RNA sequence: GGGAACGACUCGAGUAGAGUCGAAAACGCUCGUGAGCUGGCAAAGAAACGCGGCUGGUCGGUGCGGGUCGCCGAGGGUAUGGUGCUCGGCCAGUGGUCUGCGGUGGUCGGCCACCAGAUCGCCGAAGUGUGCGUAUAACUUCGGUUAUACGCACACAAAAGAAACAACAACAACAAC
Reactivity to DMS in 0.01 (KOAc 150mM, MgCl2 10mM, bicine 150mM(pH8.5), 24C), signal-to-noise 1, nucleotides 027 to 126: c160g000c030u020c130g000u000g000a020g010c000u000g010g000c050a050a090a040g000a090a110a070c110g030c000g000g020c010u000g030g010u000c070g010g050u000g020c000g010g000g000u000c090g040c040c000g030a150g030g000g030u000a060u000g000g020u010g000c150u010c070g010g000c020c020a070g000u000g000g000u000c000u020g000c000g060g020u000g010g000u000c030g000g020c110c010a000c030c090a000g000a110u010c010g010c020c020g020a090a040
Reactivity to 2A3 in 0.01 (KOAc 150mM, MgCl2 10mM, bicine 150mM(pH8.5), 24C), signal-to-noise 4, nucleotides 027 to 126: c050g000c020u040c020g130u120g030a050g020c030u020g040g000c050a120a110a040g080a050a130a020c040g000c000g030g000c010u010g040g000u050c070g090g000u260g210c040g010g030g100u080c050g010c020c020g000a060g020g010g020u060a070u100g050g000u050g060c070u010c060g040g030c010c000a140g060u090g040g160u040c040u090g040c020g080g000u000g010g000u010c000g020g010c000c000a010c000c000a010g000a090u110c030g030c070c010g060a100a080
Conditions: 150 mM KOAc, 10 mM MgCl2 and 150 mM bicine (pH 8.5), 24 C.
Chemical mapping of a 177-nucleotide RNA with DMS and 2A3.
It was measured as part of the RMDB library OK1LIB.
Reactivities are given for positions 27 through 126.